Background: Chemical mapping of a 177-nucleotide RNA with 2A3 and DMS. The reactions ran in a buffer of 150 mM KOAc, 10 mM MgCl2 and 150 mM bicine (pH 8.5), at 24 C. Reactivities are given for positions 27 through 126. For 2A3, 3,517 sequencing reads were counted. For 2A3 the reverse transcriptase was SuperScript II with manganese. Source: RMDB library OK1LIB, as collected in RNAgym.

[RMDB]
RNA sequence: GGGAACGACUCGAGUAGAGUCGAAAAAUGAAGACGUACAAUCAGAUGUUAUUGGUAGGGGGAUAACAUCCCACUGUACGUCAAAGAGUAAGUGGGAGUUAAUCCCCCAUUAACUGGACUUACUCAAGGUUGAGCGUGAUUUCGAUCAUGCUCAACCAAAAGAAACAACAACAACAAC
Reactivity to 2A3 in 0.01 (KOAc 150mM, MgCl2 10mM, bicine 150mM(pH8.5), 24C), signal-to-noise 5, nucleotides 027 to 126: a000u260g040a080a030g070a020c030g030u100a050c060a040a090u110c070a080g050a100u060g050u100u060a040u090u080g110g040u120a210g040g020g000g010g020a000u000a000a000c010a180u010c000c010c040a010c030u030g040u060a020c010g020u010c010a000a110a010g030a000g010u020a030a000g000u020g030g150g020a010g010u010u040a090a180u060c000c000c000c000c000a000u000u000a000a000c000u060g050g080a020c030u020u040a020c020u030c110a060a040
Reactivity to DMS in 0.01 (KOAc 150mM, MgCl2 10mM, bicine 150mM(pH8.5), 24C), signal-to-noise 3, nucleotides 027 to 126: a110u010g010a070a080g020a050c020g000u000a020c040a070a120u030c180a120g000a100u000g020u000u000a050u020u020g000g020u000a100g000g010g000g030g020a020u000a030a000c010a080u000c000c050c040a020c000u010g000u010a030c050g040u030c150a080a120a090g040a100g000u010a020a010g000u000g000g000g020a110g000u010u000a050a080u000c010c000c010c000c000a000u000u010a000a000c070u000g000g020a040c140u040u000a080c050u020c030a140a170